[RMDB]
RNA sequence: GGGAACGACUCGAGUAGAGUCGAAAAGCGCCGGUGUUGGUGAAGGUGACCCUGCCGUCGCCGAUGACGUAGCUCAGCCGGCGGUUGACCCGGUAGGUCCCGCCGGGGGUGUGCACCCAGGGCAGCACGUGUUUUAUCUUUUCGAAGAUAAAACACGAAAAGAAACAACAACAACAAC
Reactivity to DMS in 0.01 (KOAc 150mM, MgCl2 10mM, bicine 150mM(pH8.5), 24C), signal-to-noise 8, nucleotides 027 to 126: g000c030g020c020c010g010g010u010g020u010u010g010g020u000g000a060a080g010g020u000g010a100c070c060c030u020g020c050c020g000u000c010g010c000c010g000a090u010g010a060c070g000u010a120g010c050u010c030a270g010c010c010g000g010c000g000g000u010u020g000a090c020c010c100g000g020u030a110g000g000u010c010c010c000g010c010c010g000g000g000g000g010u010g010u000g010c070a110c010c030c020a080g010g000g010c070a080g010c140a190
Reactivity to 2A3 in 0.01 (KOAc 150mM, MgCl2 10mM, bicine 150mM(pH8.5), 24C), signal-to-noise 9, nucleotides 027 to 126: g050c030g020c020c010g010g010u080g050u140u190g020g030u040g050a060a030g040g030u100g060a150c010c000c030u050g030c030c010g010u030c010g000c010c010g020a060u100g030a020c080g060u110a020g010c020u010c050a030g040c020c000g000g000c030g000g000u030u150g010a020c020c000c010g020g050u130a080g010g050u010c000c000c000g000c000c000g010g000g000g020g010u090g050u070g020c040a060c010c010c010a020g010g010g000c010a020g020c020a010
An RNA of 177 nucleotides, treated with DMS and 2A3 and read out base by base. It was measured as part of the RMDB libraries RFM100 and RFMREP. 2A3 adducts were read by reverse transcription with SuperScript II with manganese.